The record gives the reactivity of an RNA of 207 nucleotides to 2A3. 2A3 adducts were read by reverse transcription with SuperScript II with manganese. Source: RMDB library M2RFPK, as collected in RNAgym. Conditions: 150 mM KOAc, 10 mM MgCl2 and 150 mM bicine (pH 8.5), 24 C.
[RMDB]
RNA sequence: GGGAACGACUCGAGUAGAGUCGAAAAAUCUUUAAGCAGAUGGCAGGUCCACCCCGUACGGUGCGGAAGUUCGCGCUUCCGUGAAACGCGAAAAUCGGACGGUGGCUGCAAGUCGCAUCGCAAAACCUAUAGCUUGUUAGGUUCGCCUAACAAGCAAGUACACGCCAGUGUUCGCACUGGCGUGUACAAAAGAAACAACAACAACAAC
Reactivity to 2A3 in 0.01 (KOAc 150mM, MgCl2 10mM, bicine 150mM(pH8.5), 24C), signal-to-noise 2, nucleotides 027 to 156: a010u080c040u000u200u040a100a020g000c070a100g030a050u050g010g030c000a000g000g020u010c000c000a000c000c000c000c000g030u050a020c090g000g040u080g010c000g010g020a010a000g000u110u300c120g000c050g020c130u000u020c000c000g000u010g050a100a080a000c110g000c010g080a040a040a070a130u080c000g000g030a030c110g010g000u030g020g040c000u000g000c010a030a010g030u060c030g000c070a020u040c070g000c050a040a060a050a060c000c020u130a140u110a160g000c000u000u000g000u000u000a000g030g010u010u060c140g050c020c000u000a000a000c000a000a000g000c000a000a000